[RMDB]
RNA sequence: GGGAACGACUCGAGUAGAGUCGAAAAAGCGACAUGCCAGGCCGUGAGCACACCUGGCCACUGGGCUCCAGCCGGCUGGAGAUACGAGUUGUGUGCUCUAAGGUGCCCCGGGCCUACCAGGCAUUUGUAAACUUGCAGUAUUCGUACUGCAAGUUUAAAAAGAAACAACAACAACAAC
Reactivity to 2A3 in 0.01 (KOAc 150mM, MgCl2 10mM, bicine 150mM(pH8.5), 24C), signal-to-noise 2, nucleotides 027 to 126: a000g100c070g070a070c030a090u040g000c020c000a010g030g020c030c010g070u060g010a000g010c000a000c000a010c000c000u020g090g000c020c000a010c010u090g020g090g020c030u010c040c010a030g090c100c190g240g000c010u030g000g020a070g010a050u180a100c130g050a050g100u100u070g050u180g020u020g010c000u000c000u020a140a030g020g020u060g000c030c030c020c030g020g030g070c000c000u020a090c000c000a050g000g000c010a020u030u050u110g090
Reactivity to DMS in 0.01 (KOAc 150mM, MgCl2 10mM, bicine 150mM(pH8.5), 24C), signal-to-noise 5, nucleotides 027 to 126: a080g010c080g010a110c170a060u000g010c010c030a090g000g020c060c060g010u020g010a030g020c020a020c020a080c040c150u000g000g010c000c040a050c060u010g010g000g020c060u000c010c010a020g010c090c130g020g020c020u010g000g000a090g000a090u010a070c130g000a100g010u010u000g010u000g020u000g010c010u000c020u010a080a080g010g010u010g010c050c010c020c040g020g010g020c030c010u010a120c090c120a130g020g010c040a040u000u010u010g010

This 177-nucleotide RNA was probed chemically with 2A3 and DMS. The 2A3 profile rests on 2,004 reads. The DMS profile rests on 5,761 reads. DMS adducts were read by reverse transcription with MarathonRT. Values are in units of 0.01, from 0 to 300, in steps of 10. High DMS reactivity at an A or C suggests that its Watson-Crick edge is free.